[RMDB]
RNA sequence: GGGAACGACUCGAGUAGAGUCGAAAAUUGAUGAUUUAACUAAUAUGCGUGAGCACACAGGUGCAUAUUUAAUUGUUGAUGACUUAAAGAAUUUACAAAAAAGUGGUCGAAUUACUGGUGCUCAAGCCGAGUAGUUGCAAUUCGUUGCAACUACUCGAAAAGAAACAACAACAACAAC
Reactivity to DMS in 0.01 (KOAc 150mM, MgCl2 10mM, bicine 150mM(pH8.5), 24C), signal-to-noise 3, nucleotides 027 to 126: u000u010g000a080u000g020a130u010u000u020a060a170c060u040a050a050u050a060u030g020c000g000u000g000a000g000c010a010c010a070c040a020g030g030u040g000c080a030u000a010u030u020u030a050a100u020u000g030u010u000g030a030u000g000a170c080u010u030a080a110a120g000a110a070u000u020u040a050c100a000a030a040a060a050a070g030u010g000g010u030c030g000a100a040u040u000a080c000u010g000g020u000g020c000u030c000a060a050g020c110
Reactivity to 2A3 in 0.01 (KOAc 150mM, MgCl2 10mM, bicine 150mM(pH8.5), 24C), signal-to-noise 4, nucleotides 027 to 126: u120u050g050a020u030g040a050u160u180u120a200a060c060u110a030a080u090a110u170g020c030g000u000g000a000g050c000a000c000a000c000a030g000g080u150g060c030a060u060a100u060u120u140a100a160u100u060g060u020u070g030a040u070g030a010c040u040u130a050a190a120g130a110a190u220u170u190a090c210a010a090a000a000a000a000g070u050g050g000u060c030g040a070a000u140u040a100c000u000g000g000u000g000c010u030c010a000a000g090c000
Notes: The data come from the RNA Mapping Database (RMDB), library OK1LIB. The record gives the reactivity of an RNA of 177 nucleotides to DMS and 2A3. For DMS the reverse transcriptase was MarathonRT. The RNA was probed in 150 mM KOAc, 10 mM MgCl2 and 150 mM bicine (pH 8.5) at 24 C. 2A3 adducts were read by reverse transcription with SuperScript II with manganese.